[RMDB]
RNA sequence: GGGAACGACUCGAGUAGAGUCGAAAAUAGCAGGACAUAGCUGUUAUGCGCGAAGCGGUGUAGCGUCACUUUGAUGGCGGUACUAUGAAUUGAUGCAAGGUGUGGAGCGACCUUAAACAGUUCUGGUUUGACGGCUUUCAGUUCGCUGAAAGCCGAAGGUGUAGCGGAGGUUCGCCUCCGCUACACCAAAAGAAACAACAACAACAAC
Reactivity to 2A3 in 0.01 (KOAc 150mM, MgCl2 10mM, bicine 150mM(pH8.5), 24C), signal-to-noise 2, nucleotides 027 to 156: u070a000g010c040a010g000g050a140c050a060u100a030g040c010u050g040u130u090a050u110g060c030g020c030g080a080a040g030c070g050g050u060g030u040a080g000c070g070u030c010a000c020u090u240u300g160a290u060g020g000c000g040g090u030a040c030u040a060u120g060a030a080u040u020g100a000u060g020c050a020a000g060g000u020g050u110g030g000a000g000c060g000a030c000c000u080u090a040a120a010c000a020g000u020u020c020u050g000g110u020u100u110g090a070c000g000g010c000u000u000u000c000a000g000u000u100c100g000c130u000g000a020a000a000g000c000c000g000a000a000

Chemical mapping of a 207-nucleotide RNA with 2A3.
Conditions: 150 mM KOAc, 10 mM MgCl2 and 150 mM bicine (pH 8.5), 24 C.
Reactivities are given for positions 27 through 156.
It was measured as part of the RMDB library M2RFPK.